[RMDB]
RNA sequence: GGGAACGACUCGAGUAGAGUCGAAAAGGGUAUCAUGAAGUUGAUUGGCAGGAGAUAGAAGAGUUGGAAGAAACAGAUGUCAGAGGAGAUGGAUUUUGUCUUUAUCAUUCCAUACUAUAUAGUAUGGGCCUGAGCAAGGAGAACUCUCGCACCACUGCUUGGACGUGAAUUUCGAUUCACGUCCAAGAAAAGAAACAACAACAACAAC
Reactivity to 2A3 in 0.01 (KOAc 150mM, MgCl2 10mM, bicine 150mM(pH8.5), 24C), signal-to-noise 2, nucleotides 027 to 156: g040g000g010u110a060u110c040a040u130g030a130a040g030u060u060g070a180u060u070g000g010c050a040g000g070a020g000a050u090a050g040a050a020g020a040g010u040u130g000g040a070a050g000a020a070a000c050a050g040a100u080g060u100c050a000g000a010g060g000a050g000a060u050g090g000a030u000u000u030u110g110u000c000u040u090u120a130u110c010a120u160u070c010c010a010u000a050c020u010a040u140a140u080a300g000u000a000u030g010g010g010c040c000u030g000a000g000c040a020a040g040g010a040g020a010a010c010u050c000u000c090g060c000a080c040c010a040c020u000g000